The record gives the reactivity of an RNA of 177 nucleotides to DMS and 2A3. 2A3 adducts were read by reverse transcription with SuperScript II with manganese.
[RMDB]
RNA sequence: GGGAACGACUCGAGUAGAGUCGAAAAGAUGCUCCAGCACUCGCAGCAGCUCAUGUAGGAGUUGCUAUGGGAGCUGUCGGAACCGAUGUUGCAUUAGAAACUGCGGAUGUAGCCUUAAUGGGUGAUAAUAAUAAUAGGUAUUCGUACCUAUUAUUAUAAAAGAAACAACAACAACAAC
Reactivity to DMS in 0.01 (KOAc 150mM, MgCl2 10mM, bicine 150mM(pH8.5), 24C), signal-to-noise 9, nucleotides 027 to 126: g010a090u000g010c020u000c060c010a050g010c010a080c010u000c010g030c070a030g010c000a010g010c010u000c010a150u010g020u010a150g020g010a030g010u000u000g010c000u000a020u000g010g010g000a050g020c010u000g010u000c070g010g010a110a140c050c030g010a080u010g010u000u000g010c040a080u010u000a100g010a090a080a080c090u000g010c040g000g010a080u000g010u000a130g000c020c030u000u010a070a100u010g000g000g020u000g010a120u010a070
Reactivity to 2A3 in 0.01 (KOAc 150mM, MgCl2 10mM, bicine 150mM(pH8.5), 24C), signal-to-noise 6, nucleotides 027 to 126: g030a020u070g020c010u010c020c010a020g020c010a000c020u030c020g040c020a010g010c000a000g010c010u000c030a100u210g170u300a090g240g150a010g020u010u010g000c000u000a020u030g010g020g010a020g000c000u020g040u060c050g040g040a030a040c020c010g010a050u120g060u140u050g000c040a040u050u090a060g080a080a120a030c050u070g010c020g030g020a050u070g030u070a020g010c000c010u100u180a150a060u180g020g010g020u050g060a050u080a240
The DMS profile rests on 44,609 reads.